[RMDB]
The record gives the reactivity of an RNA of 177 nucleotides to DMS and 2A3. 2A3 adducts were read by reverse transcription with SuperScript II with manganese. For DMS the reverse transcriptase was MarathonRT. The DMS profile rests on 5,219 reads. Values are in units of 0.01, from 0 to 300, in steps of 10.
RNA sequence: GGGAACGACUCGAGUAGAGUCGAAAAACAUAGGUUGGGCCAUAGGCGCUGCGGUUCAUCAUCUUGCCCUCGCCAGGACCGCUCCCGUUCUACUACUUGGCGACGCGGAUACCGGGUUGGAAAACAAUCUAAAGGUACGAUUCGUCGUACCUUUAGAAAAAGAAACAACAACAACAAC
Reactivity to DMS in 0.01 (KOAc 150mM, MgCl2 10mM, bicine 150mM(pH8.5), 24C), signal-to-noise 5, nucleotides 027 to 126: a120c110a080u000a080g000g010u000u000g000g010g010c030c030a050u000a110g000g000c040g010c050u000g010c080g010g000u000u000c050a100u000c070a060u010c070u000u000g010c010c010c020u000c040g000c010c010a040g010g000a110c040c020g000c030u000c040c010c000g010u000u010c120u000a090c130u010a060c070u000u000g010g010c070g020a050c170g020c020g000g000a070u000a060c040c030g030g000g010u000u000g020g000a070a050a070a090c170a100a090
Reactivity to 2A3 in 0.01 (KOAc 150mM, MgCl2 10mM, bicine 150mM(pH8.5), 24C), signal-to-noise 1, nucleotides 027 to 126: a000c040a050u160a040g000g070u040u040g000g060g000c040c000a050u090a080g020g000c020g000c080u040g040c030g050g000u050u070c020a060u050c010a050u070c070u090u110g050c010c000c000u000c010g030c000c010a020g020g010a040c020c010g030c010u040c020c000c020g030u070u050c060u090a210c000u000a030c020u040u090g030g070c050g010a030c030g000c000g040g020a020u040a130c020c020g000g070g020u040u110g070g030a030a070a030a050c030a040a050